Chemical mapping of a 207-nucleotide RNA with 2A3 and DMS. The reactions ran in a buffer of 150 mM KOAc, 10 mM MgCl2 and 150 mM bicine (pH 8.5), at 24 C. DMS adducts were read by reverse transcription with MarathonRT. It was measured as part of the RMDB library M2RFPK. For DMS, 21,625 sequencing reads were counted.
[RMDB]
RNA sequence: GGGAACGACUCGAGUAGAGUCGAAAAGAAUCACCGUACCUAUUUAGGUUUACGCUCCAAGAUCGGUGGAUAGCAGCCCUAUCAAUAGCUAGGAGAACUGUGCUAUGUUUAGAAGAUUAGGUAGUCUAUUACACAGCCAUGUUCGCAUGGCUGUGAAUCAUAUGUACCUAUUCGUAGGUACAUAUGAAAAAGAAACAACAACAACAAC
Reactivity to 2A3 in 0.01 (KOAc 150mM, MgCl2 10mM, bicine 150mM(pH8.5), 24C), signal-to-noise 7, nucleotides 027 to 156: g060a030a060u080c000a010c030c010g020u040a020c000c030u080a150u200u190u260a060g010g030u030u060u090a080c090g020c030u020c030c020a080a010g050a150u100c040g010g020u020g030g040a050u060a030g030c040a020g010c000c000c010u030a050u070c060a070a080u030a040g000c010u010a000g020g040a100g060a110a090c040u070g010u030g060c010u020a010u070g070u010u070u040a120g030a160a030g020a100u140u070a030g070g000u020a020g040u020c030u020a100u080u120a060c000a000c010a000g000c000c000a000u010g030u040u050c120g000c100a000u010g000g030c000u000g000u000g010a000a010
Reactivity to DMS in 0.01 (KOAc 150mM, MgCl2 10mM, bicine 150mM(pH8.5), 24C), signal-to-noise 7, nucleotides 027 to 156: g010a150a120u000c010a160c030c020g020u000a060c000c010u000a170u010u000u010a040g030g010u000u000u010a070c070g020c020u000c020c020a100a090g010a070u000c050g010g050u000g020g010a090u000a070g010c030a200g030c060c040c010u010a180u000c040a080a100u000a060g030c050u000a090g000g010a120g010a080a090c040u010g010u010g030c030u010a060u000g010u000u000u010a110g010a110a130g010a100u000u000a060g020g020u000a100g020u000c040u000a100u000u000a220c010a020c000a010g000c000c000a020u000g020u000u000c280g030c010a020u010g010g010c000u010g010u000g010a010a100